Chemical mapping of a 177-nucleotide RNA with 2A3 and DMS. It was measured as part of the RMDB library OK1LIB. 2A3 adducts were read by reverse transcription with SuperScript II with manganese. The RNA was probed in 150 mM KOAc, 10 mM MgCl2 and 150 mM bicine (pH 8.5) at 24 C.
[RMDB]
RNA sequence: GGGAACGACUCGAGUAGAGUCGAAAAAUCGCACCUCUGGUGGCCACCGGGUCACCCCUGGACCCCAGCGCCGACUUGUUUGCCGUGGUCGGGCUGCUAUUCCUGGGCACCGUCGCACUGACCCUGGAUAGCUAUCCAAAUUCGUUUGGAUAGCUAUAAAAGAAACAACAACAACAAC
Reactivity to 2A3 in 0.01 (KOAc 150mM, MgCl2 10mM, bicine 150mM(pH8.5), 24C), signal-to-noise 9, nucleotides 027 to 126: a000u090c050g000c030a060c010c010u050c070u090g040g000u030g030g030c020c010a090c090c060g120g010g010u030c020a040c000c000c010c010u030g070g030a090c010c000c000c010a010g010c050g120c030c010g010a030c020u090u120g110u200u210u190g060c040c030g060u070g030g020u030c010g010g010g010c020u020g000c010u060a090u090u060c010c020u040g000g030g000c020a020c010c030g060u050c010g010c010a030c040u060g070a100c000c010c010u020g020g060
Reactivity to DMS in 0.01 (KOAc 150mM, MgCl2 10mM, bicine 150mM(pH8.5), 24C), signal-to-noise 7, nucleotides 027 to 126: a050u020c080g010c060a070c020c030u000c070u000g020g020u010g000g000c030c030a130c160c110g000g010g020u010c020a060c050c020c030c020u010g020g000a100c050c040c110c040a070g010c030g010c040c000g000a040c050u010u020g010u010u020u010g010c060c050g010u020g010g010u000c030g020g010g010c040u020g010c080u020a080u010u010c020c010u010g000g000g010c030a060c050c020g010u010c040g020c040a060c050u000g000a120c010c000c010u000g010g010